Source: RMDB library RFM100, as collected in RNAgym. Structure probing data (2A3) for a 177-nucleotide construct.
RNA sequence: GGGAACGACUCGAGUAGAGUCGAAAAUCUGCACGUAUGGCUUCGUCCUACGUCGCGAUUUGGACGCCAGAACCAUGUUUGUUCAAAUCUUCGGUCCGCAAGGAGAGAAGCUCUUUGGCAAACACCUCCGCUGACAUAGCUUCGGCUAUGUCAGCGGAAAAGAAACAACAACAACAAC
Reactivity to 2A3 in 0.01 (KOAc 150mM, MgCl2 10mM, bicine 150mM(pH8.5), 24C), signal-to-noise 2, nucleotides 027 to 126: u000c020u170g000c020a000c000g010u070a090u300g000g070c120u210u080c200g060u120c010c000u000a000c020g000u010c070g000c000g000a000u000u000u040g010g040a030c040g090c100c020a110g000a110a060c070c020a000u080g020u000u010u010g060u100u080c010a050a010a300u300c020u070u000c100g250g030u000c000c000g040c030a090a010g000g000a040g000a000g000a000a010g000c000u010c000u000u000u000g000g000c010a010a020a020c000a000c030c030u030